[RMDB]
RNA sequence: GGGAACGACUCGAGUAGAGUCGAAAAGAUCGUCUCUUCGGAGACGAUCAAAUAAAUCACAGGAAACGGCCAAAAGAGAAAAUCUCACCUGUGAAAACGCCGAAACCCUCUGCUUCGGCAGAGGGAAUCAAAUUGAUUGGUUCGCCAAUCAAUUUGAAAAAGAAACAACAACAACAAC
Reactivity to 2A3 in 0.01 (KOAc 150mM, MgCl2 10mM, bicine 150mM(pH8.5), 24C), signal-to-noise 1, nucleotides 027 to 126: g020a020u010c000g000u010c020u000c010u020u090c250g070g000a010g020a000c000g000a000u020c000a000a000a000u000a000a010a000u030c000a000c000a000g000g080a120a270a050c070g210g020c090c100a090a090a160a050g060a050g020a060a270a190a280u030c030u020c000a050c000c000u020g010u000g020a120a060a000a040c030g000c020c010g060a130a160a160c020c010c000u000c010u000g030c000u020u110c300g110g000c000a000g000a000g000g010g000a000a020
Reactivity to DMS in 0.01 (KOAc 150mM, MgCl2 10mM, bicine 150mM(pH8.5), 24C), signal-to-noise 1, nucleotides 027 to 126: g000a040u010c010g020u000c010u000c000u000u020c170g020g020a010g000a020c000g020a010u000c000a030a060a050u010a090a140a130u000c000a000c000a000g010g000a050a080a140c260g010g020c090c090a040a030a110a020g040a050g000a100a100a030a080u000c000u000c030a190c010c000u000g000u000g020a010a010a110a050c110g010c050c030g010a070a080a170c030c000c000u000c000u000g000c000u000u000c240g000g040c010a000g010a010g000g000g010a000a010